An RNA of 177 nucleotides, treated with 2A3 and DMS and read out base by base. The DMS profile rests on 2,436 reads. The reactions ran in a buffer of 150 mM KOAc, 10 mM MgCl2 and 150 mM bicine (pH 8.5), at 24 C. Source: RMDB library TTRDEL, as collected in RNAgym.

RNA sequence: GGGAACGACUCGAGUAGAGUCGAAAAGAUAUGGACGAAUCGAUGAACUACGCUGACACCUCGGAAACGAGGUGGAGGCGCAUCGAGUUGUGUCCUAAGUCAAAAGCUUGGUGUUCGCACCAAGCAACCACUCCUUUUACUUCGGUAAAAGGAGUGGAAAAGAAACAACAACAACAAC
Reactivity to 2A3 in 0.01 (KOAc 150mM, MgCl2 10mM, bicine 150mM(pH8.5), 24C), signal-to-noise 2, nucleotides 027 to 126: g020a020u020a020u090g000g020a000c030g070a100a300u020c010g020a000u020g000a030a060c050u150a030c300g000c010u000g010a010c010a000c010c000u000c010g040g000a020a030a020c010g010a000g000g000u000g000g000a000g000g000c010g000c000a010u000c020g020a000g050u100u230g300u120g010u160c020c000u010a020a020g020u020c020a150a000a070a090g000c000u010u000g010g010u050g050u110u140c300g000c100a000c000c000a010a000g000c000a000a000
Reactivity to DMS in 0.01 (KOAc 150mM, MgCl2 10mM, bicine 150mM(pH8.5), 24C), signal-to-noise 3, nucleotides 027 to 126: g000a030u000a140u010g010g000a000c020g000a120a080u000c000g010a010u000g000a100a050c160u020a300c050g000c000u000g000a300c010a010c010c000u000c010g020g000a020a030a080c000g000a010g010g020u000g000g000a210g000g000c000g000c000a010u000c020g040a000g020u000u010g020u000g000u000c000c000u000a020a090g000u000c020a070a130a110a060g000c000u000u000g000g020u000g010u000u000c260g010c000a010c010c000a000a020g000c000a010a030